Structure probing data (2A3 and DMS) for a 177-nucleotide construct. The reactions ran in a buffer of 150 mM KOAc, 10 mM MgCl2 and 150 mM bicine (pH 8.5), at 24 C. 2A3 adducts were read by reverse transcription with SuperScript II with manganese. The 2A3 profile rests on 3,206 reads.
RNA sequence: GGGAACGACUCGAGUAGAGUCGAAAAGGAUUCGAUGUCCACGUAGGUAACAAUCGCGGUGCCGUCACGCUCGACAACGAUCGGGACGCUGCCGUGUGACUUGCGCACCGCGGCGGCCAUCUCGUCGAAUGACGGAGCUGUUCGCAGCUCCGUCAUUAAAAGAAACAACAACAACAAC
Reactivity to 2A3 in 0.01 (KOAc 150mM, MgCl2 10mM, bicine 150mM(pH8.5), 24C), signal-to-noise 4, nucleotides 027 to 126: g060g010a030u060u080c030g000a010u150g070u010c010c010a050c080g080u100a110g000g070u120a150a040c010a080a100u130c000g010c010g010g020u010g020c010c000g000u030c010a010c050g030c010u050c020g050a050c030a240a240c080g060a160u070c040g000g000g050a040c010g010c030u050g000c000c040g010u020g010u000g010a020c000u080u200g040c080g000c080a010c000c010g000c000g000g000c000g040g010c000c010a030u030c060u040c010g050u000c020g030
Reactivity to DMS in 0.01 (KOAc 150mM, MgCl2 10mM, bicine 150mM(pH8.5), 24C), signal-to-noise 2, nucleotides 027 to 126: g000g040a040u000u010c040g000a070u060g030u020c030c000a080c070g030u030a010g030g020u000a150a090c200a020a120u040c000g090c020g000g000u000g010c210c030g000u020c030a020c020g000c030u000c040g000a080c290a070a080c120g000a060u010c040g010g000g010a030c160g000c020u000g010c110c060g000u060g040u000g000a030c160u010u070g010c120g010c020a030c020c080g030c000g030g000c120g000g000c030c040a030u000c010u000c040g000u010c040g030